[RMDB]
RNA sequence: GGGAACGACUCGAGUAGAGUCGAAAACCAGAUGACGGUCCUGCCAUGAGACCGCAACGAGAGCAUGUCGCAUCGAAUGGACUCGGGGAGUCGGCAGCUUGCCCCACGGAUGAGCGCCUAAUGCCGGCUACCUCCUUUUAUUCGUAAAAGGAGGUAGAAAAGAAACAACAACAACAAC
Reactivity to DMS in 0.01 (KOAc 150mM, MgCl2 10mM, bicine 150mM(pH8.5), 24C), signal-to-noise 9, nucleotides 027 to 126: c010c010a150g010a100u010g000a140c060g010g000u000c020c020u000g000c120c090a070u010g000a140g000a030c030c080g020c060a080a070c110g010a090g000a090g010c050a050u020g010u010c040g000c040a080u010c060g000a080a290u010g000g000a050c030u000c050g000g010g000g010a070g010u000c020g000g000c010a060g010c040u010u000g010c030c000c020c060a100c130g010g000a060u010g000a070g000c040g000c050c050u010a060a080u010g000c010c010g000g010
Reactivity to 2A3 in 0.01 (KOAc 150mM, MgCl2 10mM, bicine 150mM(pH8.5), 24C), signal-to-noise 9, nucleotides 027 to 126: c010c000a020g050a120u160g050a050c020g010g020u020c010c010u060g120c040c020a100u120g030a030g010a100c010c030g010c030a030a040c050g090a010g010a010g130c050a080u130g050u140c040g010c050a040u050c050g060a050a050u110g030g030a030c030u020c060g020g000g010g010a040g040u050c010g020g000c010a020g030c020u060u120g040c000c000c000c020a040c050g040g020a090u100g040a030g030c030g020c010c020u080a100a030u100g020c010c000g000g000
An RNA of 177 nucleotides, treated with DMS and 2A3 and read out base by base. For 2A3 the reverse transcriptase was SuperScript II with manganese. Source: RMDB libraries RFM100 and RFMREP, as collected in RNAgym.